[RMDB]
RNA sequence: GGGAACGACUCGAGUAGAGUCGAAAAACCUGAUGAUUCGUCAUCAGGUCACAUGCCGCGCGAACGGCUUCCUGACCGGGCGGAUUCACUUUAAAUGGAGCACUGCUGCAUCAUUCGUGAUGCAGAACUCUUGCGCACAAUUCGUUGUGCGCAAGAGAAAAGAAACAACAACAACAAC
Reactivity to 2A3 in 0.01 (KOAc 150mM, MgCl2 10mM, bicine 150mM(pH8.5), 24C), signal-to-noise 2, nucleotides 027 to 126: a000c010c020u030g020a030u010g000a010u010u080c190g040u010c070a000u010c070a050g010g000u020c020a050c010a040u150g040c000c000g000c010g000c020g090a120a020c010g040g030c000u050u070c020c010u000g040a030c000c020g030g040g010c000g000g070a010u130u120c030a060c120u100u140u140a090a130a100u210g020g010a050g030c050a060c140u130g040c000u000g020c010a000u000c010a010u010u060c180g080u020g000a000u000g000c000a000g040a000a000
Reactivity to DMS in 0.01 (KOAc 150mM, MgCl2 10mM, bicine 150mM(pH8.5), 24C), signal-to-noise 1, nucleotides 027 to 126: a030c000c000u000g010a010u000g020a030u000u030c140g030u000c000a000u000c000a050g000g000u000c080a040c210a110u000g010c010c000g010c060g040c130g000a080a140c060g000g000c020u000u000c050c020u000g000a080c090c050g000g000g000c050g000g020a090u010u010c030a060c110u000u000u000a040a090a110u000g000g000a030g030c080a060c110u010g020c000u000g000c000a000u000c000a050u010u000c140g000u000g000a000u000g000c000a010g000a000a050